[RMDB]
RNA sequence: GGGAACGACUCGAGUAGAGUCGAAAAAGCAGUCGCCUCACAUUCAUUUUUUGAAUAUAAUGAAGGCAGAUCAAUCUUCGGCAAUGUUUGUAGACGCGACCUUACAAAGUAUACUAUGAUGGAUUUGUGUUAUGCUUUACGUAACUUUGAUGAGAAAUACAACGUGUGUAUUCGUACACACGUUGUAAAAAGAAACAACAACAACAAC
Reactivity to 2A3 in 0.01 (KOAc 150mM, MgCl2 10mM, bicine 150mM(pH8.5), 24C), signal-to-noise 3, nucleotides 027 to 156: a000g040c040a030g000u030c000g010c020c030u030c030a050c000a000u010u000c000a010u010u060u060u130u160u160g090a160a090u240a080u120a170a120u180g010a010a040g100g050c070a050g030a130u070c020a020a030u000c020u010u000c000g050g000c070a030a020u020g010u010u030u020g020u020a080g000a010c030g000c010g000a000c000c000u010u020a030c020a030a040a000g020u030a050u000a150c070u020a050u160g060a060u070g060g120a100u110u120u100g110u030g020u080u050a030u080g010c010u060u040u060a060c070g030u040a050a020c050u060u140u100g130a140u120g010a050g020a030a090a100
Reactivity to DMS in 0.01 (KOAc 150mM, MgCl2 10mM, bicine 150mM(pH8.5), 24C), signal-to-noise 3, nucleotides 027 to 156: a080g040c050a300g010u000c030g040c010c010u000c020a060c060a050u000u000c010a020u000u010u000u010u000u000g000a060a100u010a100u000a110a110u010g020a090a030g020g020c030a080g020a050u000c030a100a100u000c080u000u000c110g000g050c040a080a130u000g000u000u010u020g020u010a110g050a050c050g010c030g000a070c040c030u020u010a070c020a040a040a110g020u000a120u000a040c030u000a070u000g000a130u010g010g010a150u000u000u010g010u020g010u010u000a120u010g000c030u000u000u000a090c130g000u000a040a140c050u000u000u000g010a130u000g010a160g010a120a090a240